This 177-nucleotide RNA was probed chemically with 2A3 and DMS.
RNA sequence: GGGAACGACUCGAGUAGAGUCGAAAAGAUAUGGAACCGUCGGUACCAGCGAGGAUCUGUGUUCGGAAACGAACACAGGGAGCUGAACCGCGGUUCCUAAGUCAAAACUUGUCGUUCGCGACAAGAACAUCAGAAAUGCGUUCGCGCAUUUCUGAUGAAAAGAAACAACAACAACAAC
Reactivity to 2A3 in 0.01 (KOAc 150mM, MgCl2 10mM, bicine 150mM(pH8.5), 24C), signal-to-noise 1, nucleotides 027 to 126: g000a000u070a000u120g000g020a020a000c020c000g290u300c180g150g030u100a250c300c090a040g000c000g020a300g020g000a000u040c000u000g000u000g000u000u000c010g040g000a060a130a050c020g000a000a000c040a010c030a040g020g000g000a000g000c020u070g080a020a020c000c010g000c000g020g000u010u000c000c000u000a000a000g000u000c000a000a000a090a160c010u010u030g000u000c020g080u070u100c300g050c020g150a000c020a000a000g010a060a080
Reactivity to DMS in 0.01 (KOAc 150mM, MgCl2 10mM, bicine 150mM(pH8.5), 24C), signal-to-noise 2, nucleotides 027 to 126: g020a040u000a300u010g000g000a030a030c040c000g010u020c020g060g010u000a120c300c040a000g000c010g020a110g010g030a010u020c000u000g020u000g000u000u000c010g030g000a080a140a190c000g000a010a010c000a000c000a040g010g000g020a020g000c050u000g020a090a050c000c000g010c030g020g000u000u000c000c020u000a010a040g000u020c000a110a130a130a130c000u000u010g000u000c010g020u000u020c300g010c030g000a000c000a070a000g000a110a150
2A3 adducts were read by reverse transcription with SuperScript II with manganese. Conditions: 150 mM KOAc, 10 mM MgCl2 and 150 mM bicine (pH 8.5), 24 C. Reactivities are given for positions 27 through 126.